[RMDB]
Source: RMDB library OK2TRN, as collected in RNAgym. This 177-nucleotide RNA was probed chemically with 2A3 and DMS. For DMS, 103,918 sequencing reads were counted. Values cover nucleotides 27 to 126.

RNA sequence: GGGAACGACUCGAGUAGAGUCGAAAAGAACGAGUGGAUCCCAACACGUGCAUCACGAAAUGGGAACAACUCGUAGGCGUGUUGUUCGCAUUUCGGAGAGAUUUGUGUUGCGAAGGGUACGCCAAGACUACUCGGUACUAUUCGUAGUAUCGAGUAGAAAAGAAACAACAACAACAAC
Reactivity to 2A3 in 0.01 (KOAc 150mM, MgCl2 10mM, bicine 150mM(pH8.5), 24C), signal-to-noise 9, nucleotides 027 to 126: g040a040a010c040g010a020g020u020g000g040a060u010c000c000c000a000a000c010a000c000g030u050g000c030a080u030c000a030c040g010a030a020a010u030g010g050g000a000a010c010a010a010c000u010c020g020u030a100g070g190c080g000u010g000u000u010g030u000u000c040g010c110a000u020u020u020c010g000g000a120g000a000g000a010u050u060u160g010u000g000u010u030g010c050g070a090a030g050g000g010u030a010c010g010c020c010a070a010g050a030
Reactivity to DMS in 0.01 (KOAc 150mM, MgCl2 10mM, bicine 150mM(pH8.5), 24C), signal-to-noise 9, nucleotides 027 to 126: g010a110a100c090g010a080g030u000g010g000a090u000c010c020c020a030a030c020a020c010g010u010g010c290a130u000c020a080c000g000a010a030a030u000g000g000g000a010a020c010a020a010c000u000c010g010u010a100g010g010c090g010u000g000u000u000g000u000u000c000g000c000a010u000u000u000c000g000g000a080g010a090g000a130u000u000u010g010u000g000u000u000g010c250g010a080a090g010g010g010u000a030c040g010c020c070a090a100g010a200

Background: Values are in units of 0.01, from 0 to 300, in steps of 10.